[RMDB]
RNA sequence: GGGAACGACUCGAGUAGAGUCGAAAAGCAUGAUGGCAGUGGGACAGGAGGCGGACCAGAGGUGAGGGUCCAAGCUAGUCCUGGCUCUGGGACACUCUCUGUGUUGUCCCUGAUCAAGUCACUCAUCUCCAAGGUCAGUAGCACCUGGAGGUGCUAACGGGGAGUAUUUAUUCGUAAAUACUCCCCGAAAAGAAACAACAACAACAAC
Reactivity to 2A3 in 0.01 (KOAc 150mM, MgCl2 10mM, bicine 150mM(pH8.5), 24C), signal-to-noise 4, nucleotides 027 to 156: g050c050a060u120g040a050u060g140g010c070a040g060u060g050g030g020a010c030a030g010g010a030g040g020c020g010g010a020c010c010a020g010a030g110g140u170g120a080g020g030g020u030c030c030a040a040g030c040u100a040g070u040c000c030u020g040g000c010u000c040u010g020g000g000a010c010a010c010u070c010u000c040u050g040u020g090u250u050g010u030c000c000c000u010g010a030u090c070a050a030g030u010c000a010c090u050c010a010u000c000u000c020c010a170a110g010g010u040c060a080g090u130a040g110c110a000c000c000u020g000g010a040g010g000u010g000c020u070a070a070
Reactivity to DMS in 0.01 (KOAc 150mM, MgCl2 10mM, bicine 150mM(pH8.5), 24C), signal-to-noise 2, nucleotides 027 to 156: g020c040a110u010g010a120u010g010g010c030a100g000u010g030g000g000a130c030a140g020g010a070g000g020c060g000g010a180c010c000a040g000a070g000g010u000g000a100g050g030g030u010c000c060a050a060g020c080u000a060g000u000c030c030u010g020g020c020u030c000u010g010g020g020a040c020a030c010u000c100u000c070u020g050u030g050u000u000g010u000c010c010c030u000g000a080u000c070a070a120g020u010c020a070c050u010c000a060u000c010u010c000c010a070a090g020g010u010c020a190g020u010a150g030c040a070c010c000u000g000g020a070g040g060u010g000c030u020a050a230

Record summary: An RNA of 207 nucleotides, treated with 2A3 and DMS and read out base by base. DMS adducts were read by reverse transcription with MarathonRT. The data come from the RNA Mapping Database (RMDB), library OK3TST. The reactions ran in a buffer of 150 mM KOAc, 10 mM MgCl2 and 150 mM bicine (pH 8.5), at 24 C. 2A3 adducts were read by reverse transcription with SuperScript II with manganese. Values cover nucleotides 27 to 156.